[RMDB]
RNA sequence: GGGAACGACUCGAGUAGAGUCGAAAAUAACAGCUGGUUUGAAGCGUCACAUGCCUUCUCUGGCUCAUCGUUUCCAAGGUACUGGCCAGCAAUAACAGCUCCCCCUGUAGCAAGAGCCGAAAAGCUAGGCAGUAGCAGUAUUCGUACUGCUACUGCCAAAAGAAACAACAACAACAAC
Reactivity to DMS in 0.01 (KOAc 150mM, MgCl2 10mM, bicine 150mM(pH8.5), 24C), signal-to-noise 1, nucleotides 027 to 126: u030a030a010c030a050g000c000u020g050g020u030u030u000g040a090a120g000c040g020u000c110a080c080a020u120g000c050c000u010u000c000u000c080u000g040g000c080u000c160a170u000c000g000u000u000u020c020c000a140a040g010g020u000a100c130u000g000g080c020c010a210g030c090a070a010u020a100a050c180a120g000c150u010c040c000c030c130c090u000g010u000a080g000c090a030a120g060a000g000c020c040g000a030a000a050a020g000c030u000a040
Reactivity to 2A3 in 0.01 (KOAc 150mM, MgCl2 10mM, bicine 150mM(pH8.5), 24C), signal-to-noise 2, nucleotides 027 to 126: u090a040a030c030a030g010c000u050g000g180u090u080u130g150a120a010g040c050g030u040c070a080c030a140u200g000c000c040u090u050c050u000c060u100g110g000c000u000c020a040u030c040g030u000u050u050c040c000a070a040g070g000u080a040c030u020g000g000c000c040a000g000c020a000a080u160a200a050c070a010g010c020u030c000c000c000c000c020u050g040u010a000g000c060a040a070g030a010g070c010c000g090a060a060a010a040g060c070u090a100
An RNA of 177 nucleotides, treated with DMS and 2A3 and read out base by base. The reactions ran in a buffer of 150 mM KOAc, 10 mM MgCl2 and 150 mM bicine (pH 8.5), at 24 C. Values cover nucleotides 27 to 126. DMS adducts were read by reverse transcription with MarathonRT. For 2A3, 1,284 sequencing reads were counted.